[RMDB]
RNA sequence: GGGAACGACUCGAGUAGAGUCGAAAAGCCGAUGAAUUGCCGAGAAGCAUGGCUCGAAAUCGUCGACGCAUCGACGACGGUCCUGCCAUGAGACCGUAACGAGGACAUGUCGCCUCGAAUGGCGUCGUAUAACAUGAGUGGUUCGCCACUCAUGUAACAUUUAGGCGUGGUUCGCCACGCCUAAAUGAAAAGAAACAACAACAACAAC
Reactivity to DMS in 0.01 (KOAc 150mM, MgCl2 10mM, bicine 150mM(pH8.5), 24C), signal-to-noise 1, nucleotides 027 to 156: g030c020c040g020a110u000g040a150a090u010u000g010c070c050g050a190g010a160a070g000c070a090u000g020g010c000u000c040g000a040a060a040u000c020g080u000c030g000a050c210g010c170a150u000c000g000a020c010g010a040c020g030g000u000c020c000u010g040c000c070a100u000g020a060g010a030c040c060g030u000a050a110c080g010a130g040g030a060c060a120u000g020u000c030g010c000c030u000c000g020a120a020u000g030g020c040g000u010c010g000u010a100u000a040a110c000a020u000g010a050g010u010g040g020u010u000c300g000c060c000a020c000u010c020a000u030g020u010a000a160
Reactivity to 2A3 in 0.01 (KOAc 150mM, MgCl2 10mM, bicine 150mM(pH8.5), 24C), signal-to-noise 3, nucleotides 027 to 156: g000c010c020g060a080u110g030a050a180u120u080g060c040c010g040a030g080a110a040g020c080a140u130g000g020c030u050c050g060a090a050a090u060c020g000u020c000g060a020c050g050c200a190u090c030g010a010c000g000a010c000g020g010u000c000c010u010g050c000c010a010u030g040a010g000a060c000c000g040u090a000a010c020g000a000g000g000a010c050a160u200g040u200c090g010c010c020u020c000g010a020a050u030g000g000c000g040u030c010g010u020a070u050a230a040c000a000u010g000a000g000u000g030g050u060u090c210g050c070c000a000c000u000c000a000u000g000u000a000a000